The record gives the reactivity of an RNA of 207 nucleotides to DMS and 2A3. It was measured as part of the RMDB library OK3TST. In probing experiments dimethyl sulfate is read out at A N1 and C N3, which are open when not base-paired.
RNA sequence: GGGAACGACUCGAGUAGAGUCGAAAAGGGCUUCAGGGACGCUGGCUGGUAACCCAAGAGCAACCCUAAAUCCCAACUUGGUCCAUGUCCUAGAAUAUCAAAGGAGAAUCUUAAACCCUGAGUGGGAUGAGGAGCCUCCUAAGCUUGAAGAGAGCCAAUCUCCUUAUACGUUCGCGUAUAAGGAGAUAAAAGAAACAACAACAACAAC
Reactivity to DMS in 0.01 (KOAc 150mM, MgCl2 10mM, bicine 150mM(pH8.5), 24C), signal-to-noise 1, nucleotides 027 to 156: g010g030g040c020u000u010c060a160g050g020g010a100c050g040c080u010g010g050c040u030g040g010u010a080a040c040c010c050a100a130g030a080g010c090a010a080c000c000c000u010a030a080a140u000c000c000c020a100a180c090u030u000g010g030u000c010c080a080u000g010u000c040c000u000a140g010a140a060u010a150u000c080a090a180a100g000g010a040g030a060a090u020c040u010u000a070a100a130c030c000c000u000g010a220g020u000g010g000g020a140u000g010a100g010g010a060g040c130c020u000c010c020u000a090a070g020c050u000u000g000a100a240g000a160g010a100g020c020c010a070
Reactivity to 2A3 in 0.01 (KOAc 150mM, MgCl2 10mM, bicine 150mM(pH8.5), 24C), signal-to-noise 2, nucleotides 027 to 156: g080g000g010c020u060u100c120a000g020g000g030a060c040g000c030u020g110g100c050u050g000g040u080a100a100c010c020c020a020a010g010a010g040c040a000a030c030c000c000u080a160a120a000u000c000c000c010a010a070c060u020u050g010g010u020c070c030a070u030g080u000c010c000u050a070g050a150a120u180a130u270c160a090a130a030g020g000a040g030a050a020u020c040u070u130a140a170a090c010c000c020u030g030a040g170u260g000g000g000a010u050g020a040g020g000a010g020c020c020u020c000c000u040a050a020g010c000u040u030g030a070a000g020a030g010a010g050c000c000a040